[RMDB]
This 177-nucleotide RNA was probed chemically with DMS and 2A3. Source: RMDB library OK2TST, as collected in RNAgym. For DMS, 944 sequencing reads were counted. The RNA was probed in 150 mM KOAc, 10 mM MgCl2 and 150 mM bicine (pH 8.5) at 24 C. For DMS the reverse transcriptase was MarathonRT. DMS (dimethyl sulfate) methylates the pairing face of unpaired adenines and cytosines.
RNA sequence: GGGAACGACUCGAGUAGAGUCGAAAACUGUUAAUUUCAAUGCAUUUUGCUGAAAUUCGGCAAACUCUAGCAUGGUUUCCCUCCCACAAGGGCCCACCCGCAAGAACCGCAGCGAGUAAUACGCCUAGUGCACUAGGCUAUUCGUAGCCUAGUGCACAAAAGAAACAACAACAACAAC
Reactivity to DMS in 0.01 (KOAc 150mM, MgCl2 10mM, bicine 150mM(pH8.5), 24C), signal-to-noise 2, nucleotides 027 to 126: c140u000g010u020u000a080a060u010u000u000c020a090a080u010g030c000a220u010u000u000u000g040c000u010g000a040a090a250u010u000c080g010g030c020a020a040a020c250u000c120u000a070g020c090a040u010g000g020u010u000u000c000c000c000u000c010c000c030a070c180a080a050g020g040g000c020c050c040a080c080c000c050g050c070a110a120g000a030a080c080c110g010c090a060g020c040g020a020g000u010a040a040u000a060c190g000c020c020u000a100
Reactivity to 2A3 in 0.01 (KOAc 150mM, MgCl2 10mM, bicine 150mM(pH8.5), 24C), signal-to-noise 1, nucleotides 027 to 126: c090u040g110u260u100a110a110u090u110u100c070a040a040u060g000c020a000u000u040u130u120g000c020u040g050a130a300a300u300u140c030g030g020c010a000a020a100c090u040c050u190a020g000c000a050u060g030g070u020u070u000c000c000c000u010c000c000c000a050c040a060a080g030g010g090c070c020c010a010c020c000c010g030c010a000a080g020a070a000c070c000g050c090a010g000c000g000a000g030u000a040a070u110a080c090g000c020c020u020a010